[RMDB]
An RNA of 207 nucleotides, treated with DMS and 2A3 and read out base by base.
RNA sequence: GGGAACGACUCGAGUAGAGUCGAAAAGCACUAGAGGGCGUAACGGCUGGGUGUAACCCAACUCUAGGUGUGCUGAUUAGGGGGCUUGACUCCGUAACAAAUAGGCACUGGUGGUAAAAAGCAUCCCUGACCAUAUACAUCUUCGGAUGUAUAUGAAUCAUAUAGGGUACUUCGGUACCCUAUAUGAAAAAGAAACAACAACAACAAC
Reactivity to DMS in 0.01 (KOAc 150mM, MgCl2 10mM, bicine 150mM(pH8.5), 24C), signal-to-noise 3, nucleotides 027 to 156: g010c000a050c030u000a070g020a040g010g010g030c040g020u000a160a120c220g030g000c020u010g020g010g010u000g030u010a060a300c010c010c000a040a030c020u000c020u000a090g000g000u000g010u000g020c020u010g000a170u000u000a080g020g020g040g010g010c030u000u000g000a150c020u000c000c010g010u000a060a130c030a030a100a140u010a140g020g000c080a040c050u000g010g030u010g010g010u000a040a060a050a080a050g000c030a120u000c020c000c020u010g000a150c130c010a020u000a000u000a010c000a000u000c000u010u000c300g030g010a020u000g020u000a000u000a010u000g000a070a110
Reactivity to 2A3 in 0.01 (KOAc 150mM, MgCl2 10mM, bicine 150mM(pH8.5), 24C), signal-to-noise 2, nucleotides 027 to 156: g000c010a000c020u010a000g000a010g000g010g020c010g060u070a090a030c040g130g010c010u010g000g030g000u020g050u040a030a040c010c000c000a010a000c000u010c010u000a060g000g140u050g030u020g040c040u030g000a090u020u120a040g010g000g000g000g000c020u030u030g010a060c020u000c030c000g020u020a040a000c000a050a120a080u190a070g070g000c070a020c110u100g090g030u080g010g050u130a100a080a060a050a000g000c010a080u050c000c020c000u010g030a030c000c000a000u010a000u000a010c000a000u000c010u010u020c180g090g000a000u000g000u000a000u000a000u010g010a000a070

The reactions ran in a buffer of 150 mM KOAc, 10 mM MgCl2 and 150 mM bicine (pH 8.5), at 24 C.
For 2A3 the reverse transcriptase was SuperScript II with manganese.
Source: RMDB library M2RFPK, as collected in RNAgym.